RNA sequence: GGGAACGACUCGAGUAGAGUCGAAAAGAAAGCUCCUCAACCGUGUGGAGGAGAAUGGCUAUAACCACAGAAACCUGAGGAAACAGGAAGCCACAACGCAAGCCAUGUGGUUCGCACACGGAAGAAAGGUAUAUGGUCAGUUCGCUGACCAUAUACCAAAAGAAACAACAACAACAAC
Reactivity to 2A3 in 0.01 (KOAc 150mM, MgCl2 10mM, bicine 150mM(pH8.5), 24C), signal-to-noise 5, nucleotides 027 to 126: g120a010a030a010g050c000u000c000c010u010c020a120a300c030c000g010u010g010u010g000g000a020g010g010a020g010a030a010u060g030g000c010u020a000u090a300a020c020c000a010c020a050g130a060a050a020c010c000u010g020a040g060g300a070a090a000c010a020g000g000a010a000g000c000c020a020c020a090a060c070g090c090a090a040g050c060c040a040u030g000u000g050g000u050u060c070g000c000a020c000a000c020g010g030a000a010g050a020a040a010
Reactivity to DMS in 0.01 (KOAc 150mM, MgCl2 10mM, bicine 150mM(pH8.5), 24C), signal-to-noise 4, nucleotides 027 to 126: g000a090a090a120g020c000u000c000c000u010c000a170a120c020c010g000u000g020u010g030g000a000g010g000a000g000a030a030u030g000g000c000u020a070u040a090a200c000c010a080c080a120g040a050a050a110c000c000u010g000a120g000g010a080a210a200c040a010g010g000a240a070g040c010c020a020c070a120a100c080g020c090a070a030g020c040c140a180u000g030u000g010g000u020u040c180g010c000a010c020a010c000g020g000a280a060g030a050a090a090

Source information
Conditions: 150 mM KOAc, 10 mM MgCl2 and 150 mM bicine (pH 8.5), 24 C. Structure probing data (2A3 and DMS) for a 177-nucleotide construct. For 2A3, 5,838 sequencing reads were counted. The DMS profile rests on 4,127 reads. Source: RMDB library OK1LIB, as collected in RNAgym. DMS adducts were read by reverse transcription with MarathonRT.